[RMDB]
RNA sequence: GGGAACGACUCGAGUAGAGUCGAAAACCGUGACAUUGCGAAAGCAAGGCUGGCGGUAGGUAGUCCUGGCCGGCGACAGCCUUGGACUGCGGCGUAAAGGUGUACCUGGGGCCGUUAAACCUAUCGUGAAAGGCAACUUGGUUCGCCAAGUUGCCAACCUUUGUAGUCUGUUCGCAGACUACAAAGGAAAAGAAACAACAACAACAAC
Reactivity to 2A3 in 0.01 (KOAc 150mM, MgCl2 10mM, bicine 150mM(pH8.5), 24C), signal-to-noise 2, nucleotides 027 to 156: c000c000g070u050g070a070c190a220u010u070g020c000g060a120a040a030g020c020a030a000g080g100c110u090g030g040c000g010g000u010a000g010g010u020a010g000u030c000c000u020g010g030c000c010g060g080c040g040a050c060a000g000c000c020u050u060g000g000a000c000u040g000c000g000g030c020g020u070a030a030a030g050g000u190g100u290a300c000c000u020g000g000g220g010c000c000g010u020u060a030a060a010c000c000u000a000u040c000g000u000g050a140a070a020g000g000c000a000a000c000u000u000g020g020u070u040c020g040c060c000a000a000g000u000u010g000c000c000a000a000
Reactivity to DMS in 0.01 (KOAc 150mM, MgCl2 10mM, bicine 150mM(pH8.5), 24C), signal-to-noise 1, nucleotides 027 to 156: c010c020g040u010g010a100c020a040u000u010g000c000g000a120a140a250g030c030a010a050g000g020c020u000g020g040c010g020g040u000a020g000g060u000a020g010u000c020c020u000g010g000c020c010g030g010c300g020a120c000a040g010c000c020u000u000g020g000a010c010u000g010c010g000g040c000g060u000a140a260a050g010g030u000g000u000a090c020c010u000g010g030g040g010c010c010g020u000u000a030a080a220c030c010u000a050u000c010g040u000g050a050a130a140g090g010c020a010a020c000u020u000g030g020u000u000c300g000c000c000a010a070g010u010u010g000c000c010a010a000